[RMDB]
RNA sequence: GGGAACGACUCGAGUAGAGUCGAAAAGAUAUGGAAAUAUGACUUGUCAGCCUCUCACUUCGGAAACGAAGUGGAGGCUUGGAUUUAGCAAUGUAUUUCCUAAGUCAAACUCAGCUUCGGCUGAGAACCUAUAGUGCUCGUUCGCGAGCACUAUAGGAAAAGAAACAACAACAACAAC
Reactivity to 2A3 in 0.01 (KOAc 150mM, MgCl2 10mM, bicine 150mM(pH8.5), 24C), signal-to-noise 1, nucleotides 027 to 126: g040a040u050a070u180g010g050a000a020a000u020a040u130g300a300c070u000u000g000u030c000a040g060c040c000u000c070u130c040a000c000u020u020c040g000g030a090a020a050c010g000a000a040g000u000g030g000a000g010g050c000u010u020g010g000a010u010u300u180a020g000c010a070a020u150g000u010a020u000u030u000c000c000u030a100a010g010u000c010a060a000a050c010u030c040a010g010c000u070u140c260g240g000c000u020g010a000g000a000a000
Reactivity to DMS in 0.01 (KOAc 150mM, MgCl2 10mM, bicine 150mM(pH8.5), 24C), signal-to-noise 2, nucleotides 027 to 126: g000a030u000a300u000g000g020a030a000a010u010a020u000g000a110c050u010u000g000u000c030a050g010c000c000u000c010u050c040a000c000u000u000c000g010g000a090a050a190c000g010a010a000g000u010g010g000a000g000g010c000u020u000g030g020a020u000u020u000a010g020c080a110a030u010g000u010a010u000u000u000c010c000u000a070a130g000u000c020a110a140a190c000u000c000a010g000c010u000u000c280g000g000c010u000g000a010g000a020a140